[RMDB]
RNA sequence: GGGAACGACUCGAGUAGAGUCGAAAACGAGGGGUGGGCGAAAGUUGCCAUGAGACCGUAACUUUCGUAGUCAUUGAUAAAGGGGCAGGUCACGCUCUUUUGUCAUUGCGGUUGCCUAGAGGCAUGGAAAACCAUGACAGGUUCGCCUGUCAUGGAACGUUGAUGUUAUGUUCGCAUAACAUCAACGAAAAGAAACAACAACAACAAC
Reactivity to DMS in 0.01 (KOAc 150mM, MgCl2 10mM, bicine 150mM(pH8.5), 24C), signal-to-noise 2, nucleotides 027 to 156: c080g010a100g040g020g000g020u020g020g000g020c010g000a010a020a030g020u000u000g060c010c020a270u000g030a240g030a100c170c120g040u000a040a020c000u000u000u040c030g010u030a100g030u000c050a090u000u000g000a020u000a010a010a010g010g030g020g000c000a170g020g030u010c110a130c150g030c010u000c000u000u000u000u010g020u020c050a070u000u000g020c030g000g020u010u000g000c010c020u000a090g000a240g020g010c020a120u000g010g000a080a060a070a180c010c000a000u010g000a040c000a010g020g010u000u000c300g030c030c000u000g000u020c010a000u000g020g000a010a010
Reactivity to 2A3 in 0.01 (KOAc 150mM, MgCl2 10mM, bicine 150mM(pH8.5), 24C), signal-to-noise 2, nucleotides 027 to 156: c060g030a070g020g030g010g050u160g020g000g000c020g000a020a000a010g000u000u010g010c040c020a110u150g090a060g030a130c040c050g000u010a000a000c000u020u020u030c020g000u010a010g040u050c010a020u020u040g000a010u020a020a010a000g010g000g010g000c030a030g080g210u240c080a030c130g000c000u010c000u000u020u000u000g000u000c000a010u010u050g010c050g000g030u060u040g010c000c000u070a090g030a140g040g010c030a020u060g030g040a050a090a020a040c000c000a010u000g000a000c000a000g030g000u050u060c140g070c040c000u010g010u000c000a000u000g000g000a000a010
The record gives the reactivity of an RNA of 207 nucleotides to DMS and 2A3. DMS adducts were read by reverse transcription with MarathonRT. It was measured as part of the RMDB library M2RFPK. For DMS, 4,171 sequencing reads were counted.